[RMDB]
RNA sequence: GGGAACGACUCGAGUAGAGUCGAAAAGAAGAGAAGAAACGGCCAUUGGUAGGAAAGGCCGAACACGCGUGACCUACCAACAAGCAAGGAGCAGGCUGGUAUGCCUGCAAAGAGAGAGUAGGAGAAAAUGCUAUACGCCGUUCGCGGCGUAUAGCAUAAAAGAAACAACAACAACAAC
Reactivity to DMS in 0.01 (KOAc 150mM, MgCl2 10mM, bicine 150mM(pH8.5), 24C), signal-to-noise 1, nucleotides 027 to 126: g000a090a060g040a070g000a050a120g000a060a030a130c000g000g000c000c060a300u000u000g000g000u000a000g000g000a040a180a090g070g000c000c060g000a000a000c300a300c300g000c000g030u000g000a300c000c000u010a050c000c000a050a000c110a060a110g000c010a150a180g000g000a100g000c000a000g000g000c000u010g010g000u020a030u140g030c000c000u000g000c000a030a020a020g000a070g000a140g000a040g000u000a000g000g000a070g000a140a010a080
Reactivity to 2A3 in 0.01 (KOAc 150mM, MgCl2 10mM, bicine 150mM(pH8.5), 24C), signal-to-noise 1, nucleotides 027 to 126: g000a020a040g080a000g030a000a160g030a040a080a000c000g060g000c020c060a000u030u020g000g000u000a000g000g000a140a180a000g130g000c010c020g000a030a000c000a000c010g060c260g080u030g030a070c000c000u030a030c040c000a010a010c000a000a000g170c000a000a000g050g080a000g000c000a000g000g000c000u130g000g260u280a110u220g000c010c000u070g030c000a020a020a020g000a000g000a000g000a000g060u050a010g000g160a010g080a080a000a000

This 177-nucleotide RNA was probed chemically with DMS and 2A3. Conditions: 150 mM KOAc, 10 mM MgCl2 and 150 mM bicine (pH 8.5), 24 C. For DMS the reverse transcriptase was MarathonRT. Values cover nucleotides 27 to 126. Source: RMDB library OK1LIB, as collected in RNAgym. For 2A3 the reverse transcriptase was SuperScript II with manganese.